[RMDB]
RNA sequence: GGGAACGACUCGAGUAGAGUCGAAAAUGUGACCCCAACACCAGGCCUGUAGGGGAGAAGAACUGCACGGGCCCGCCCUGUGACCGGCAGUGGACCGUCUCCGACUGGGGACCGGUGAGGCCUGCACCUGUGGGCAAUUUUUCGAAAUUGCCCACAGAAAAGAAACAACAACAACAAC
Reactivity to DMS in 0.01 (KOAc 150mM, MgCl2 10mM, bicine 150mM(pH8.5), 24C), signal-to-noise 1, nucleotides 027 to 126: u020g010u030g010a180c020c000c000c020a220a120c060a050c130c020a040g000g010c040c000u010g020u000a150g020g010g030g000a130g040a100a170g010a080a010c020u020g010c030a050c030g000g000g000c060c020c090g020c000c030c040u010g000u010g010a080c030c020g000g000c010a030g000u020g000g000a060c130c050g000u000c000u000c000c010g000a100c190u010g000g000g000g000a020c020c080g020g020u000g000a050g040g020c000c000u000g030c250a040c220
Structure probing data (DMS) for a 177-nucleotide construct. Values cover nucleotides 27 to 126. Source: RMDB library OK2TRN, as collected in RNAgym.